[RMDB]
Chemical mapping of a 177-nucleotide RNA with DMS and 2A3. Source: RMDB library M2PK90, as collected in RNAgym. The RNA was probed in 150 mM KOAc, 10 mM MgCl2 and 150 mM bicine (pH 8.5) at 24 C. Reactivities are rounded to 0.1 and cut off at 0 and 3.
RNA sequence: GGGAACGACUCGAGUAGAGUCGAAAAGAAGAGAGCGUAGCACACACUCAGACUGUACGACAGUCUGACACACACCUUCGCUAGUGCAUCGUGUGUGUGAUAUCGAUGUUGCACGAAGAUGAGGAAACGUUAAUAUUAACUUCGGUUAAUAUUAACGAAAAGAAACAACAACAACAAC
Reactivity to DMS in 0.01 (KOAc 150mM, MgCl2 10mM, bicine 150mM(pH8.5), 24C), signal-to-noise 9, nucleotides 027 to 126: g010a100a080g000a090g010a080g010c040g010u000a120g020c020a030c090a040c050a090c110u000c010a010g010a020c010u000g010u010a140c290g010a140c010a010g010u000c000u000g000a040c180a020c030a030c020a020c010c020u000u000c100g030c050u000a110g020u010g010c020a020u000c060g010u000g010u000g020u000g010u000g010a100u010a050u000c080g010a090u000g010u000u000g010c020a060c020g010a060a070g000a090u000g010a110g000g000a080a070a170
Reactivity to 2A3 in 0.01 (KOAc 150mM, MgCl2 10mM, bicine 150mM(pH8.5), 24C), signal-to-noise 9, nucleotides 027 to 126: g130a050a010g090a000g010a010g050c040g020u060a030g000c010a020c000a000c000a000c030u020c010a000g000a010c000u010g020u150a120c130g150a050c210a000g010u000c000u000g010a010c000a000c000a000c000a010c010c010u070u070c050g020c070u120a090g100u060g220c010a020u040c040g030u010g000u000g000u010g000u020g110a040u040a030u160c040g010a070u060g020u080u070g010c020a010c030g030a040a030g050a100u160g050a050g060g040a080a070a010
For 2A3, 69,463 sequencing reads were counted. For DMS, 45,201 sequencing reads were counted.